[RMDB]
RNA sequence: GGGAACGACUCGAGUAGAGUCGAAAACGCUGGGAGUCGUGGAGACGUGUAACAAGACACCUCCCCACCGACCUGAAGCGCGCACGGGUCGAGGGUGUCCGCCCACGUCGUUGAAACGACUCCUGUGCUGAAGCGCGCACGGCAACCGAAAGGUGCGGUGGUCAAUUUACUUCGGUAAAUUGACCACAAAAGAAACAACAACAACAAC
Reactivity to 2A3 in 0.01 (KOAc 150mM, MgCl2 10mM, bicine 150mM(pH8.5), 24C), signal-to-noise 2, nucleotides 027 to 156: c050g000c010u050g000g010g010a010g000u000c020g000u010g020g040a110g000a070c110g030u010g020u080a160a260c190a080a030g000a000c000a010c000c000u090c000c040c000c010a050c020c010g010a000c000c000u030g030a230a020g010c010g010c010g000c020a040c000g000g000g010u000c020g000a030g000g010g020u000g000u000c000c010g010c000c010c000a000c010g010u020c020g080u110u170g100a030a040a000c030g000a010c000u010c000c000u010g000u010g000c000u070g030a060a030g000c000g000c000g000c000a000c000g010g010c020a050a060c000c000g060a110a070a060g000g000u030g010c060g030